The data come from the RNA Mapping Database (RMDB), libraries RFM100 and RFMREP. An RNA of 177 nucleotides, treated with DMS and 2A3 and read out base by base. Values cover nucleotides 27 to 126.
RNA sequence: GGGAACGACUCGAGUAGAGUCGAAAAGGAGUUUGGCUGGGGCGGCACAUCUGUUAAAUGAUAACACAGGUGUCCUAAGGUGAGCUCAAUGAGAACAGAAAUCUCAUGUAGAACAAAAGGGUAAAAGAACAGAUAAGUGUUUCGACACUUAUCUGUUAAAAGAAACAACAACAACAAC
Reactivity to DMS in 0.01 (KOAc 150mM, MgCl2 10mM, bicine 150mM(pH8.5), 24C), signal-to-noise 6, nucleotides 027 to 126: g010g010a060g010u020u010u010g010g020c030u010g000g000g000g030c140g030g010c180a040c020a020u000c010u010g010u000u010a060a130a130u050g010a150u050a090a120c200a030c040a040g000g010u000g010u000c030c020u010a110a100g000g000u000g000a090g020c030u000c050a090a020u010g010a020g000a020a100c110a210g010a120a090a060u000c000u000c010a010u000g010u020a120g010a080a080c140a020a060a040a100g000g000g020u030a040a080a080a080g010
Reactivity to 2A3 in 0.01 (KOAc 150mM, MgCl2 10mM, bicine 150mM(pH8.5), 24C), signal-to-noise 5, nucleotides 027 to 126: g070g010a050g020u040u080u110g050g040c020u010g020g000g030g000c050g050g000c060a000c000a040u000c000u000g020u040u060a110a240a170u260g140a130u170a200a030c050a000c000a060g030g000u020g000u020c000c010u090a110a040g070g040u010g010a000g000c010u010c010a020a020u010g000a010g000a060a050c080a090g150a140a120a080u000c000u000c000a000u030g060u080a050g060a130a020c060a020a080a010a000g130g000g000u050a040a050a080a030g100
Overview
The RNA was probed in 150 mM KOAc, 10 mM MgCl2 and 150 mM bicine (pH 8.5) at 24 C. DMS (dimethyl sulfate) methylates the pairing face of unpaired adenines and cytosines.